Source: RMDB library M2PK50, as collected in RNAgym.
Chemical mapping of a 177-nucleotide RNA with 2A3 and DMS.
DMS adducts were read by reverse transcription with MarathonRT.
The reactions ran in a buffer of 150 mM KOAc, 10 mM MgCl2 and 150 mM bicine (pH 8.5), at 24 C.

[RMDB]
RNA sequence: GGGAACGACUCGAGUAGAGUCGAAAACCCCGCACCUUCGGGUGCGGGGAACUACCGAGAAUGCGACUCGGUAUAAACGCAAAACCCUUGGAAACAAGGGAAUUCACGAACAGUUCGCUGUUCGUAACGCACUAAUCAGAUUCGUCUGAUUAGUGCGAAAAGAAACAACAACAACAAC
Reactivity to 2A3 in 0.01 (KOAc 150mM, MgCl2 10mM, bicine 150mM(pH8.5), 24C), signal-to-noise 1, nucleotides 027 to 126: c000c000c000c010g090c020a020c000c020u020u080c300g110g010g020u020g080c000g000g030g000g090a000a000c020u040a040c000c000g000a000g000a060a100u060g020c020g070a090c090u000c000g000g000u000a010u030a010a000a000c040g000c000a000a040a140a270c000c010c000u000u000g030g000a030a050a010c000a000a010g000g020g050a010a070u040u040c070a010c010g020a000a030c000a010g050u100u110c150g040c080u010g000u000u000c000g000u000a020a020
Reactivity to DMS in 0.01 (KOAc 150mM, MgCl2 10mM, bicine 150mM(pH8.5), 24C), signal-to-noise 1, nucleotides 027 to 126: c010c000c000c000g070c010a000c000c000u000u010c230g000g010g040u010g020c000g040g000g090g030a000a010c070u000a300c010c000g000a000g010a030a080u000g030c050g030a120c000u010c000g000g010u000a030u010a010a050a030c020g080c080a020a130a090a120c000c000c000u020u000g000g020a230a090a160c000a030a020g000g020g020a000a000u010u000c140a020c000g000a000a000c010a020g000u000u000c210g030c010u010g000u000u000c010g030u000a090a060